Source: RMDB library OK2TST, as collected in RNAgym. Chemical mapping of a 177-nucleotide RNA with DMS and 2A3. Values cover nucleotides 27 to 126. 2A3 is a SHAPE reagent: it acylates the 2'-hydroxyl of flexible nucleotides of all four kinds. The RNA was probed in 150 mM KOAc, 10 mM MgCl2 and 150 mM bicine (pH 8.5) at 24 C.
RNA sequence: GGGAACGACUCGAGUAGAGUCGAAAAGAUCAUGGGGCUGCCUCCUCUGCCAGCCCCCGGCGAGCCUUGCCCGUUGGCUCAGGAGGAGGUGAUUGAGAUCAACCGGGCAGGUGAGCCUGGGCGUCAAAGUAAAUAAAUCAUUCGUGAUUUAUUUACUAAAAGAAACAACAACAACAAC
Reactivity to DMS in 0.01 (KOAc 150mM, MgCl2 10mM, bicine 150mM(pH8.5), 24C), signal-to-noise 9, nucleotides 027 to 126: g000a070u000c070a090u000g010g010g000g020c030u000g010c050c040u000c020c020u000c060u000g010c230c050a090g010c030c010c010c020c090g000g010c010g000a300g000c010c010u010u010g030c010c000c010g020u000u000g000g000c000u000c010a030g010g010a210g000g010a100g010g020u010g010a180u010u000g000a030g010a100u000c010a030a050c080c050g020g000g010c000a030g000g010u000g000a300g000c010c000u000g010g000g000c100g010u000c080a090a070
Reactivity to 2A3 in 0.01 (KOAc 150mM, MgCl2 10mM, bicine 150mM(pH8.5), 24C), signal-to-noise 4, nucleotides 027 to 126: g030a060u160c050a090u100g010g000g000g030c020u020g020c010c020u040c000c010u050c050u050g040c020c020a040g010c010c010c000c000c000g000g000c010g000a020g000c010c030u110u180g000c000c020c000g000u010u010g010g000c000u000c010a020g030g050a070g040g080a060g010g100u130g020a050u030u070g010a010g040a120u060c010a010a020c120c070g000g000g000c000a000g010g000u020g010a000g000c000c000u020g010g020g010c050g040u080c060a140a060